[RMDB]
RNA sequence: GGGAACGACUCGAGUAGAGUCGAAAAUACGCGAGGUUCGCCUCGCGUAAAAGAGGAGCGUAAACGUGAGCGAACGUAGUGCUGUACAUCGUUCCUACACGAAUGCACAUGGUUUCGACCAUGUGAAUAUGAGUGUCUCUUUCGAGAGACACUCAUAAAAAGAAACAACAACAACAAC
Reactivity to DMS in 0.01 (KOAc 150mM, MgCl2 10mM, bicine 150mM(pH8.5), 24C), signal-to-noise 5, nucleotides 027 to 126: u000a000c000g010c000g010a010g010g010u000u000c240g020c010c010u010c000g010c000g000u000a010a020a080a110g000a120g010g010a070g010c030g010u010a040a080a090c070g000u000g010a150g010c160g000a080a040c070g000u000a110g010u010g010c070u000g010u010a080c080a150u000c010g020u000u000c010c000u000a080c150a080c180g010a100a080u030g010c000a020c000a000u000g000g000u000u000u010c190g010a020c000c000a010u000g000u000g000a040a070
Reactivity to 2A3 in 0.01 (KOAc 150mM, MgCl2 10mM, bicine 150mM(pH8.5), 24C), signal-to-noise 4, nucleotides 027 to 126: u050a000c000g000c000g000a010g020g030u060u110c190g090c060c000u000c010g000c000g000u000a010a000a000a010g120a040g050g050a020g010c050g060u160a070a040a110c040g010u020g040a040g080c080g030a070a010c040g040u080a020g030u090g120c060u070g020u100a030c010a050u030c010g010u000u000c010c000u040a040c070a000c050g150a130a080u210g010c000a000c000a000u000g000g020u030u070u090c120g020a020c010c000a000u010g010u000g000a000a020
Record summary: The record gives the reactivity of an RNA of 177 nucleotides to DMS and 2A3. Source: RMDB library M2PK50, as collected in RNAgym. Conditions: 150 mM KOAc, 10 mM MgCl2 and 150 mM bicine (pH 8.5), 24 C.